[RMDB]
RNA sequence: GGGAACGACUCGAGUAGAGUCGAAAAGUGGAGAUGGAGUUUCACCAUGUUGGCCAGACUGGUCUCAAACUCCUGACCUCAGGCAGUCCGCCCACCUCGGCCUCCCAAAGUGCUAGGAUUACAGGUGCGAGUAGAUGUGAUUCGUCACAUCUACUCGAAAAGAAACAACAACAACAAC
Reactivity to 2A3 in 0.01 (KOAc 150mM, MgCl2 10mM, bicine 150mM(pH8.5), 24C), signal-to-noise 3, nucleotides 027 to 126: g100u050g010g050a180g010a090u030g020g010a030g000u050u040u050c020a030c010c010a030u250g040u060u090g130g200c030c020a030g030a040c020u030g020g030u020c060u020c070a050a050a020c000u010c000c000u010g020a060c010c010u040c020a010g020g010c000a020g050u020c020c030g010c010c020c000a050c000c000u040c020g020g030c020c010u050c000c000c000a020a130a020g060u060g030c040u060a050g030g010a110u080u080a080c050a020g080g030u050g060
Reactivity to DMS in 0.01 (KOAc 150mM, MgCl2 10mM, bicine 150mM(pH8.5), 24C), signal-to-noise 5, nucleotides 027 to 126: g020u000g020g010a070g010a110u000g000g010a050g010u000u000u000c100a040c010c010a030u020g010u000u000g000g030c120c140a130g010a080c040u000g000g010u010c050u010c090a020a030a030c020u000c000c000u000g000a300c040c030u000c070a040g010g010c060a080g010u010c050c040g000c030c030c030a070c040c030u000c050g000g020c030c020u000c020c010c030a050a060a060g010u000g000c030u000a070g020g000a110u010u010a060c100a070g000g010u000g010

Structure probing data (2A3 and DMS) for a 177-nucleotide construct. DMS adducts were read by reverse transcription with MarathonRT. The RNA was probed in 150 mM KOAc, 10 mM MgCl2 and 150 mM bicine (pH 8.5) at 24 C.